The data come from the RNA Mapping Database (RMDB), library M2RFPK. Chemical mapping of a 207-nucleotide RNA with 2A3 and DMS. 2A3 adducts were read by reverse transcription with SuperScript II with manganese. For DMS the reverse transcriptase was MarathonRT. The DMS profile rests on 2,985 reads. Conditions: 150 mM KOAc, 10 mM MgCl2 and 150 mM bicine (pH 8.5), 24 C. Values cover nucleotides 27 to 156.
[RMDB]
RNA sequence: GGGAACGACUCGAGUAGAGUCGAAAAGCACAAGACUUCGAACAUUAUAGCAGUUAGUAGUUGCCUAAACCCAUUGCAAUAUAUGGGACAGUAGAGGUCGCAAGCCUAUCCUGUGCGGUGAACAUUCAAAAGGGAUGGUACUUCGGUACCAUCCCAACCAUCGAAGUAUGUUCGCAUACUUCGAUGGAAAAGAAACAACAACAACAAC
Reactivity to 2A3 in 0.01 (KOAc 150mM, MgCl2 10mM, bicine 150mM(pH8.5), 24C), signal-to-noise 3, nucleotides 027 to 156: g070c020a040c020a060a080g020a030c020u020u040c060g020a110a010c030a100u150u150a140u180a090g020c050a010g030u090u140a060g040u140a020g050u080u070g020c010c000u030a130a090a090c000c000c000a010u000u030g010c010a050a000u020a000u010a010u250g010g010g010a000c020a000g050u040a010g000a000g060g010u050c010g000c020a000a030g000c010c010u020a080u090c000c010u050g020u030g050c060g000g000u040g030a040a060c030a140u140u160c090a200a060a060a070g040g010g000a020u000g000g020u000a000c000u020u070c130g030g000u010a000c000c000a010u010c010c000c000a000a000
Reactivity to DMS in 0.01 (KOAc 150mM, MgCl2 10mM, bicine 150mM(pH8.5), 24C), signal-to-noise 2, nucleotides 027 to 156: g020c050a080c040a130a100g010a070c030u020u010c030g000a050a180c060a100u010u000a180u000a120g010c050a060g000u000u000a120g080u010a160g030u000u050g020c010c030u040a030a060a160c000c000c000a000u000u000g000c050a200a200u000a100u000a020u000g010g020g020a040c040a130g020u000a060g000a040g010g020u000c060g000c130a060a170g010c000c030u000a110u000c020c020u000g020u000g020c000g020g010u000g010a050a090c060a040u000u000c030a060a020a110a220g010g010g040a020u000g010g030u000a010c000u000u010c300g100g000u010a000c010c020a000u010c000c000c000a010a010